This 207-nucleotide RNA was probed chemically with DMS and 2A3.

[RMDB]
RNA sequence: GGGAACGACUCGAGUAGAGUCGAAAACACAAUUCUCUAAGCAAUGAGAAGCGUGUGGAAAAUUAGGGAAGGGCUACGGCUAUAAUCCUAAGAAAGCUUAUCUACAAGCGGAGGUAUUCUCAGAACGAAAACCAUUUGGCGUUCGCGCCAAAUGGAACAUUUCUCUAGGGUUCGCCCUAGAGAAAUGAAAAGAAACAACAACAACAAC
Reactivity to DMS in 0.01 (KOAc 150mM, MgCl2 10mM, bicine 150mM(pH8.5), 24C), signal-to-noise 1, nucleotides 027 to 156: c030a000c070a020a210u020u010c000u020c000u000a090a180g000c180a130a230u040g000a030g020a050a080g050c230g070u000g030u000g010g000a090a050a060a080u020u010a100g000g100g000a120a150g020g020g030c070u000a070c170g050g000c000u000a060u000a040a170u030c010c000u000a020a070g000a080a070a160g070c030u000u000a090u000c100u000a100c090a060a090g000c070g010g020a100g080g000u000a090u010u000c080u000c020a110g000a090a100c100g000a060a080a050a110c000c000a000u020u000u000g050g010c040g000u010u000c300g070c010g010c000c020a000a030a000u010g000g000a010a070
Reactivity to 2A3 in 0.01 (KOAc 150mM, MgCl2 10mM, bicine 150mM(pH8.5), 24C), signal-to-noise 2, nucleotides 027 to 156: c030a000c000a020a100u050u010c000u000c000u100a260a180g140c100a120a170u110g000a010g000a020a000g000c020g010u000g000u060g020g000a040a110a060a080u050u060a020g000g000g060a040a070g050g000g000c020u030a020c100g030g000c000u010a030u040a210a050u030c010c010u030a030a010g090a070a060a000g010c030u030u100a070u140c030u060a080c070a100a010g000c020g010g050a030g040g000u060a080u100u080c040u010c030a060g050a120a010c130g040a100a080a050a050c000c000a000u000u000u000g000g000c000g020u040u030c290g000c020g000c110c020a000a000a000u000g000g000a010a000

Source: RMDB library M2RFPK, as collected in RNAgym.